Chemical mapping of a 177-nucleotide RNA with DMS and 2A3. The RNA was probed in 150 mM KOAc, 10 mM MgCl2 and 150 mM bicine (pH 8.5) at 24 C. Reactivities are rounded to 0.1 and cut off at 0 and 3.

RNA sequence: GGGAACGACUCGAGUAGAGUCGAAAAAGAGGAACUGUCAUGCCUGAUCACUGGUCUGUAGGUUUAUCUGACAAGAUAGUGACCUGCCGCUACCAUCAGUUCGUUAAUGGCUGAACGCCUCUAAGUCAGUAUCUCGACAGUUCGCUGUCGAGAUACUAAAAGAAACAACAACAACAAC
Reactivity to DMS in 0.01 (KOAc 150mM, MgCl2 10mM, bicine 150mM(pH8.5), 24C), signal-to-noise 4, nucleotides 027 to 126: a020g000a030g010g010a110a130c060u020g000u000c010a010u000g010c160c010u000g000a040u010c060a160c140u010g020g000u000c060u000g000u000a020g000g000u000u020u000a000u000c010u000g000a160c300a110a020g000a010u000a020g000u000g020a010c000c000u000g010c000c230g000c130u000a030c090c100a020u010c110a070g000u000u010c130g000u010u020a080a060u010g000g020c000u000g000a040a090c300g000c000c000u000c000u010a030a130g020u000c070
Reactivity to 2A3 in 0.01 (KOAc 150mM, MgCl2 10mM, bicine 150mM(pH8.5), 24C), signal-to-noise 4, nucleotides 027 to 126: a030g010a000g030g010a070a110c030u040g020u010c000a020u080g030c010c000u000g000a000u000c040a030c050u030g010g070u150c040u070g040u010a000g020g000u020u060u000a020u000c020u030g060a050c080a070a020g040a030u030a010g210u120g090a040c000c000u000g000c000c000g020c050u040a010c040c000a000u000c020a000g010u100u080c010g020u030u120a060a020u040g000g010c010u010g070a110a010c060g050c030c000u000c000u000a040a030g080u060c040